[RMDB]
RNA sequence: GGGAACGACUCGAGUAGAGUCGAAAACGCUGGGAUCGUAUGUUUAGACAUGUCGGUACUGAAGCGCGCACGGUACACGACAACAGCUAAACCGCUACGAUCCUGUGCUGAAGCGCGCACGGCAACCGAAAGGUGCGAUGUGGCCUAUUCGUAGGCCUGCCAAGAAUGAUUUCGAUCAUUCUUGGCAAAAAGAAACAACAACAACAAC
Reactivity to DMS in 0.01 (KOAc 150mM, MgCl2 10mM, bicine 150mM(pH8.5), 24C), signal-to-noise 2, nucleotides 027 to 156: c030g020c010u000g000g000g020a000u000c000g000u000a040u000g000u000u000u000a010g020a160c060a150u030g030u000c010g000g010u000a010c030u000g010a070a060g030c020g020c010g020c000a300c050g000g020u020a010c000a190c050g000a090c000a020a090c080a090g020c000u000a010a030a040c030c070g000c000u000a010c010g020a040u000c010c010u000g000u000g030c030u000g010a090a090g000c030g030c030g000c000a290c050g010g030c000a050a130c020c030g030a120a140a180g030g010u000g020c000g000a140u000g030u000g060g020c000c010u000a080u000u000c200g020u010a020g040g020c000c040
Reactivity to 2A3 in 0.01 (KOAc 150mM, MgCl2 10mM, bicine 150mM(pH8.5), 24C), signal-to-noise 4, nucleotides 027 to 156: c070g000c010u020g040g000g000a020u000c000g020u010a060u120g030u020u000u010a090g070a250c210a210u120g000u020c020g010g000u000a010c000u050g050a260a040g040c010g000c010g000c010a000c010g010g000u050a020c300a040c170g020a010c010a160a050c040a100g010c000u000a000a000a000c000c000g000c020u000a010c000g000a000u010c000c010u010g000u000g000c030u140g040a110a030g000c020g000c000g000c040a030c040g070g000c060a120a130c030c000g050a130a050a000g020g000u030g010c030g050a100u170g120u140g060g000c000c000u030a050u040u120c240g080u100a000g020g000c000c020

Chemical mapping of a 207-nucleotide RNA with DMS and 2A3.
It was measured as part of the RMDB library RNAMAK.
Conditions: 150 mM KOAc, 10 mM MgCl2 and 150 mM bicine (pH 8.5), 24 C.
As a SHAPE reagent, 2A3 marks flexible, mostly unpaired nucleotides at the ribose 2'-OH.